[RMDB]
RNA sequence: GGGAACGACUCGAGUAGAGUCGAAAACGCAAAGCUGCAGCGCGGCGCUCUGGAGGCCUUGCCCCGCGCACUGCUCUUUACAUGGCCCGACCUGAGGGCACUUCGCGGGCAGUGCUGCGGCCUCGUGAAACUGCCCCUAAGUUCGCUUAGGGGCAAAGGUACAGAGCGUAUUCGUACGCUCUGUACCAAAAGAAACAACAACAACAAC
Reactivity to 2A3 in 0.01 (KOAc 150mM, MgCl2 10mM, bicine 150mM(pH8.5), 24C), signal-to-noise 2, nucleotides 027 to 156: c030g000c030a060a040a070g000c000u070g060c060a040g010c000g000c010g120g010c060g050c070u090c130u140g130g040a050g010g020c000c030u090u170g010c010c000c030c000g000c000g000c020a000c020u000g000c000u030c010u070u130u110a090c060a180u240g030g030c030c090c070g070a180c000c050u030g080a100g000g020g000c020a070c040u060u050c020g000c040g010g010g020c000a040g040u000g010c020u070g000c040g000g000c000c000u000c000g010u000g000a060a040a010c020u030g010c000c000c000c000u000a000a000g030u020u100c240g030c110u000u000a010g020g000g040g000c000a000a000a000

About this RNA
This 207-nucleotide RNA was probed chemically with 2A3. 2A3 adducts were read by reverse transcription with SuperScript II with manganese. The data come from the RNA Mapping Database (RMDB), library M2RFOK. The reactions ran in a buffer of 150 mM KOAc, 10 mM MgCl2 and 150 mM bicine (pH 8.5), at 24 C.